[RMDB]
RNA sequence: GGGAACGACUCGAGUAGAGUCGAAAACCAUUCCUUAUACCUUGAGUAUUGCUGAAUUCAGCUUAGCGUGCAUGCUCUUGGCUAUUCUCAUAGUGAUUGUCAAAUUUGGAGUUACUUAUUCGUCAAUAAAACACUACCACGUUCGCGUGGUAGUGAACUCCUUAUGAGUCUUCGGACUCAUAAGGAGAAAAGAAACAACAACAACAAC
Reactivity to 2A3 in 0.01 (KOAc 150mM, MgCl2 10mM, bicine 150mM(pH8.5), 24C), signal-to-noise 3, nucleotides 027 to 156: c010c000a020u040u100c050c020u150u140a070u060a130c020c010u050u040g000a020g030u050a080u110u240g030c040u050g130a230a170u190u180c110a100g010c060u110u170a050g080c030g120u080g000c000a010u000g000c000u000c000u040u020g000g000c000u040a030u130u090c080u000c090a090u080a070g090u090g100a100u090u110g080u090c070a060a050a100u080u140u150g060g000a040g050u100u090a050c040u080u080a070u210u170c080g120u040c040a070a110u100a110a120a010a050c000a000c000u000a000c000c000a000c010g000u030u050c090g020c000g120u000g000g000u000a010g000u000g000a000a000
Reactivity to DMS in 0.01 (KOAc 150mM, MgCl2 10mM, bicine 150mM(pH8.5), 24C), signal-to-noise 1, nucleotides 027 to 156: c030c040a280u000u000c000c030u000u010a220u010a040c010c030u010u000g020a090g040u000a010u020u010g030c040u020g010a150a130u000u000c110a210g010c120u020u010a070g010c080g000u010g000c070a110u020g000c010u000c020u000u010g020g030c020u000a070u000u000c060u000c010a180u000a060g000u010g000a030u010u000g030u010c020a050a090a220u000u000u000g030g010a130g010u010u000a040c040u000u000a170u000u000c040g010u000c020a040a120u000a050a070a160a190c010a000c000u000a010c000c000a020c070g010u000u010c300g040c000g030u010g000g030u000a010g000u000g000a010a070
An RNA of 207 nucleotides, treated with 2A3 and DMS and read out base by base. The reactions ran in a buffer of 150 mM KOAc, 10 mM MgCl2 and 150 mM bicine (pH 8.5), at 24 C. 2A3 adducts were read by reverse transcription with SuperScript II with manganese. The data come from the RNA Mapping Database (RMDB), library M2RFPK.